The record gives the reactivity of an RNA of 177 nucleotides to DMS. The RNA was probed in 150 mM KOAc, 10 mM MgCl2 and 150 mM bicine (pH 8.5) at 24 C. The DMS profile rests on 1,550 reads. Reactivities are given for positions 27 through 126.
RNA sequence: GGGAACGACUCGAGUAGAGUCGAAAAGACAGCCUGCAGGGAGGUGUUAACAAUGCACCUUUUUUUUUUUUUUGAGACAGAGUCUUGCUCUGUUGCCCAGGCUGGAGUGCAGUGGCUUGAUCUGGGCCGAUGCGGUAUGAUUCGUCAUACCGCAUCGAAAAGAAACAACAACAACAAC
Reactivity to DMS in 0.01 (KOAc 150mM, MgCl2 10mM, bicine 150mM(pH8.5), 24C), signal-to-noise 1, nucleotides 027 to 126: g000a150c060a090g010c040c000u010g010c140a070g000g010g010a030g020g040u000g020u000u000a090a130c210a120a040u010g020c020a020c010c010u010u000u010u010u020u000u000u000u000u000u000u090u040u030g010a300g000a000c000a020g000a020g010u000c200u010u010g030c000u010c000u000g010u000u000g030c000c060c000a050g000g000c040u010g000g020a080g010u000g000c010a030g010u000g000g020c020u010u010g010a080u000c040u000g010g010g010c050